[RMDB]
RNA sequence: GGGAACGACUCGAGUAGAGUCGAAAAGAUAUGGAGAUCGAAGAAGGCGAAGAACAAAACCAUAUGUAACAAGUGUCGGAAACGACACCGCCCAUAUGGUUUUGGGAGCCUUCCGAUCUCCUAAGUCGCUAUAAGGGGAGUUCGCUCCCCUUAUAGCAAAAGAAACAACAACAACAAC
Reactivity to 2A3 in 0.01 (KOAc 150mM, MgCl2 10mM, bicine 150mM(pH8.5), 24C), signal-to-noise 2, nucleotides 027 to 126: g020a000u090a080u190g000g000a020g000a000u000c030g060a260a150g000a020a000g260g000c060g230a300a000g010a080a040c010a010a010a010a020c000c000a000u040a000u070g110u240a200a090c120a200a180g020u000g000u000c000g010g010a070a040a030c020g000a000c000a000c000c000g070c000c050c000a000u000a000u000g000g030u010u000u010u050g000g000g000a010g030c000c010u000u020c000c000g010a010u020c000u010c000c000u010a020a000g000u000c070
Reactivity to DMS in 0.01 (KOAc 150mM, MgCl2 10mM, bicine 150mM(pH8.5), 24C), signal-to-noise 4, nucleotides 027 to 126: g000a100u000a300u030g000g000a010g000a010u000c010g020a270a160g020a020a010g000g020c000g010a120a200g010a200a220c000a000a010a000a000c010c000a000u000a000u010g000u010a060a120c260a280a050g000u010g000u000c000g000g020a120a090a230c010g020a000c010a010c000c070g000c300c130c000a010u010a010u000g000g000u000u000u000u000g000g020g000a070g010c010c000u000u000c010c020g010a020u000c020u000c000c000u000a000a080g010u000c100